[RMDB]
RNA sequence: GGGAACGACUCGAGUAGAGUCGAAAAAGUUCAUAUGCCCACCUUUGCUUGUCGACGGGUGGAUGCCUCAUGGUGCUAUGAAUGCCUAUAAUUGAAAUAUUAUAGAUGCCUAAUUUUCCUCUCUUGAGGAAAAUUAGAUGCAUACAAGGUUGAAGCAAAUAUUAAUGCAGUUCGCUGCAUUAAUAUUAAAAGAAACAACAACAACAAC
Reactivity to DMS in 0.01 (KOAc 150mM, MgCl2 10mM, bicine 150mM(pH8.5), 24C), signal-to-noise 1, nucleotides 027 to 156: a180g000u010u000c020a090u010a070u000g020c030c000c010a040c010c020u010u000u000g010c060u000u000g020u010c050g000a050c070g020g000g010u000g010g010a100u000g020c010c030u010c120a110u000g040g060u000g020c000u000a160u010g000a060a060u020g030c060c000u000a020u000a000a030u000u010g000a180a070a100u000a040u010u000a020u000a040g000a080u000g000c000c000u000a010a030u000u000u000u000c000c010u000c000u010c260u020u000g010a030g040g000a000a000a000a000u000u000a000g010a060u010g030c020a010u020a120c090a100a050g000g030u010u000g000a100a160g000c080a100
Reactivity to 2A3 in 0.01 (KOAc 150mM, MgCl2 10mM, bicine 150mM(pH8.5), 24C), signal-to-noise 2, nucleotides 027 to 156: a000g010u010u010c030a030u050a020u290g020c010c010c010a010c020c000u080u130u180g030c050u160u200g230u300c040g030a090c030g000g010g010u020g010g020a150u080g000c000c000u150c110a160u270g000g000u020g030c000u020a020u060g040a030a010u040g040c000c010u090a060u040a070a060u090u040g030a060a060a060u130a040u040u070a020u050a080g050a070u030g000c000c000u020a000a000u000u000u010u000c000c000u020c000u060c070u150u300g000a000g010g000a000a000a000a000u000u000a000g000a000u050g000c000a000u020a060c020a090a040g100g000u040u010g050a030a000g100c020a040